RNA sequence: GGGAACGACUCGAGUAGAGUCGAAAAAACACCCCAAUGUAGAGUCUGUUGGGGCAGACGGGUAAAAAUCCAAAGAAUAGAGACAAUCCGCAGCUGACCUGGCCAAAAGUAUAUUUACAAAGUAGCUAGGCAGUUCAACGCUCGCUAAGAUGUGGGUCUUAUUUGGUAUCUUCGGAUACCAAAUAAGAAAAGAAACAACAACAACAAC
Reactivity to 2A3 in 0.01 (KOAc 150mM, MgCl2 10mM, bicine 150mM(pH8.5), 24C), signal-to-noise 2, nucleotides 027 to 156: a000a000c050a040c030c040c000c000a050a030u120g050u170a110g040a030g140u030c060u060g010u040u020g050g000g010g000c000a010g030a030c020g020g000g030u120a110a150a050a020a010u070c020c010a060a100a040g050a090a100u110a020g090a000g000a040c020a060a090u060c040c020g000c050a010g000c010u030g110a300c000c000u000g030g000c000c000a000a060a000a000g000u010a080u040a050u170u220u020a020c000a000a060a010g010u020a010g010c010u000a000g020g020c000a000g000u020u000c020a060a030c050g020c010u030c000g030c020u090a070a030g030a170u080g030u050g050g030g000u000